The record gives the reactivity of an RNA of 177 nucleotides to DMS and 2A3. Values cover nucleotides 27 to 126. For DMS the reverse transcriptase was MarathonRT.
RNA sequence: GGGAACGACUCGAGUAGAGUCGAAAAUUAGUCUAUAAAGGAUUGAAAUGGAAGUAAUUAACACUGAAAAGAUUAAAUUUACUUCUUAAGGACUACGAGGCCAAUCGCACCUUGACCAGUAUGUGCACACCUAGAUAUCGUUCGCGAUAUCUAGGUGAAAAGAAACAACAACAACAAC
Reactivity to DMS in 0.01 (KOAc 150mM, MgCl2 10mM, bicine 150mM(pH8.5), 24C), signal-to-noise 2, nucleotides 027 to 126: u010u010a040g010u000c000u000a120u010a060a110a150g000g000a110u030u000g000a080a120a090u000g000g000a010a000g000u000a030a030u010u000a030a060c130a100c020u000g000a080a080a100a030g010a220u000u000a030a040a070u000u000u000a020c000u000u000c010u000u000a110a100g000g020a030c010u000a040c100g010a050g000g000c040c050a080a090u030c060g000c030a030c030c040u010u030g000a170c010c030a100g000u010a030u000g030u010g000c110a130
Reactivity to 2A3 in 0.01 (KOAc 150mM, MgCl2 10mM, bicine 150mM(pH8.5), 24C), signal-to-noise 2, nucleotides 027 to 126: u000u040a000g010u020c020u010a160u150a240a200a040g160g030a120u170u210g110a090a080a080u230g010g000a020a000g010u020a000a030u060u010a040a020c080a020c120u010g090a000a100a070a110g040a040u050u100a040a050a100u060u040u020a010c000u030u000c000u010u030a020a020g020g000a020c010u030a040c020g040a020g020g010c020c010a030a030u080c060g000c020a030c010c010u020u030g020a020c020c030a030g040u070a070u260g050u060g010c000a010